An RNA of 207 nucleotides, treated with 2A3 and read out base by base. The 2A3 profile rests on 872 reads. Reactivities are given for positions 27 through 156.
RNA sequence: GGGAACGACUCGAGUAGAGUCGAAAAGCCAAAACGCUGGGCGACGUGGAUGAUGACAUGUGCCACCUGAAGCGCGCACGGGUGAGCACAACAGCAUCAUCGUAACAUCGUCGCCUGUGCUGAAGCGCGCACGGCAACCGAAAGGUGCGAUUGUAAACUUCUUACAGUCGUUCGCGACUGUAAGAAGAAAAGAAACAACAACAACAAC
Reactivity to 2A3 in 0.01 (KOAc 150mM, MgCl2 10mM, bicine 150mM(pH8.5), 24C), signal-to-noise 1, nucleotides 027 to 156: g040c020c000a000a020a040a020c020g030c010u040g010g000g000c000g000a000c000g020u000g050g000a000u000g000a000u030g040a050c100a160u090g000u050g000c000c000a000c000c000u040g090a240a040g000c000g000c000g010c000a000c020g020g000g010u050g010a190g000c070a000c000a010a190c040a000g160c000a000u000c000a000u000c000g050u000a100a080c010a090u190c000g000u000c000g000c000c000u000g000u000g020c030u070g000a140a000g000c030g000c000g020c000a010c000g060g000c050a160a040c000c000g030a110a090a050g000g000u020g020c060g050a130u020u140g090u290a040a060a170